[RMDB]
RNA sequence: GGGAACGACUCGAGUAGAGUCGAAAAGCUUGUAAAACACAUUUGGCUAAGGCGUUGGCAGAUUUUGCUAAUUCUCAAGUAGAUGUUGUAUAUUUACCCCCAACUGUGACUUUUACAUCACGUAUGCCAUGGUAUCCGGUUUCGACCGGAUACCAUGAAAAGAAACAACAACAACAAC
Reactivity to DMS in 0.01 (KOAc 150mM, MgCl2 10mM, bicine 150mM(pH8.5), 24C), signal-to-noise 2, nucleotides 027 to 126: g020c190u000u000g000u000a020a040a060a080c040a040c020a040u000u000u000g010g010c050u020a090a060g000g000c160g020u000u010g010g010c000a050g010a230u000u030u010u000g000c020u000a010a020u000u000c000u000c020a060a060g000u000a080g020a010u000g000u010u010g040u000a090u060a260u000u000u000a090c030c020c030c050c040a080a060c200u010g020u000g000a070c080u000u010u000u000a030c150a140u000c010a040c070g010u010a070u000g020c210
Reactivity to 2A3 in 0.01 (KOAc 150mM, MgCl2 10mM, bicine 150mM(pH8.5), 24C), signal-to-noise 2, nucleotides 027 to 126: g000c080u140u080g010u090a000a000a040a020c020a020c000a000u020u060u060g070g010c000u010a000a090g060g040c080g020u000u010g000g040c030a130g150a300u150u230u180u120g000c000u000a020a020u070u030c030u030c010a050a010g010u010a000g000a020u040g050u250u090g060u100a060u020a070u110u060u040a040c010c020c000c000c010a040a000c060u020g020u010g060a030c030u150u120u110u180a110c020a030u060c000a020c070g040u070a040u130g070c050